[RMDB]
RNA sequence: GGGAACGACUCGAGUAGAGUCGAAAAAACUGUCGUGAACGCGUCACCACGUGGUAUGGAUAACCUGGACUAGUUUCCUUAAUGCUGUCUCGACAAACUCCGAACUAUCUUAAGGCAAGUCUCGGAAGCAUGUCUAACGUUUCGACGUUAGACAUGCAAAAGAAACAACAACAACAAC
Reactivity to DMS in 0.01 (KOAc 150mM, MgCl2 10mM, bicine 150mM(pH8.5), 24C), signal-to-noise 2, nucleotides 027 to 126: a000a140c010u000g000u000c000g030u010g000a090a030c070g000c000g000u000c010a080c000c000a070c090g000u000g000g030u000a100u060g060g040a020u000a070a080c010c000u000g000g000a050c030u030a080g000u000u000u000c010c060u020u050a100a110u000g000c050u000g000u000c000u020c030g000a110c110a110a020a090c110u000c010c000g000a010a070c050u000a040u010c080u000u000a100a110g000g080c160a020a000g000u010c100u000c020g000g000a130a190
Reactivity to 2A3 in 0.01 (KOAc 150mM, MgCl2 10mM, bicine 150mM(pH8.5), 24C), signal-to-noise 4, nucleotides 027 to 126: a000a020c060u020g020u020c000g000u000g030a100a020c040g000c000g030u020c030a040c060c000a050c070g060u080g060g000u090a120u150g070g020a060u070a070a030c000c000u010g010g070a020c020u020a040g020u040u070u030c010c000u060u200a090a060u120g020c020u050g000u030c000u000c000g020a030c020a040a100a020c030u000c020c000g010a010a010c010u040a080u130c050u060u120a040a030g110g000c050a050a030g000u030c020u020c120g010g000a030a020